[RMDB]
RNA sequence: GGGAACGACUCGAGUAGAGUCGAAAACAGUCAAUGUGAAGGCGGGCCAGACCAUCGCCGCAUUCUACCAGAGCACCGUCAUGAUCUUUGGCACGAUGGCUCGCUACAUACGAAGAGUUAGGGAAAAACGCACCUAUAUGUUCGCAUAUAGGUGCGUAAAAGAAACAACAACAACAAC
Reactivity to 2A3 in 0.01 (KOAc 150mM, MgCl2 10mM, bicine 150mM(pH8.5), 24C), signal-to-noise 1, nucleotides 027 to 126: c040a030g040u050c030a050a090u060g010u040g130a180a160g110g000c040g000g000g030c020c030a020g020a150c030c000a060u050c020g000c000c030g000c000a010u120u090c010u090a040c000c020a030g030a050g070c050a020c070c070g040u080c060a060u070g130a070u040c030u130u090u050g020g010c030a010c070g070a070u050g000g020c000u000c000g000c010u060a010c010a010u130a030c050g030a060a070g060a020g010u070u230a090g010g040g000a000a050a000a000
Reactivity to DMS in 0.01 (KOAc 150mM, MgCl2 10mM, bicine 150mM(pH8.5), 24C), signal-to-noise 2, nucleotides 027 to 126: c110a150g000u020c060a070a040u000g030u000g010a160a090g010g000c010g000g000g000c030c020a070g010a170c130c100a090u010c080g000c040c030g020c090a050u000u000c070u030a050c030c020a050g020a100g000c160a020c040c010g020u000c130a070u000g000a060u010c050u000u010u000g010g020c040a060c100g030a180u010g000g000c010u010c020g030c000u010a010c030a030u010a050c110g000a070a080g000a060g010u000u010a070g010g020g010a060a030a040a100
About this RNA: The record gives the reactivity of an RNA of 177 nucleotides to 2A3 and DMS. The 2A3 profile rests on 1,183 reads. 2A3 adducts were read by reverse transcription with SuperScript II with manganese. Source: RMDB library OK2TRN, as collected in RNAgym.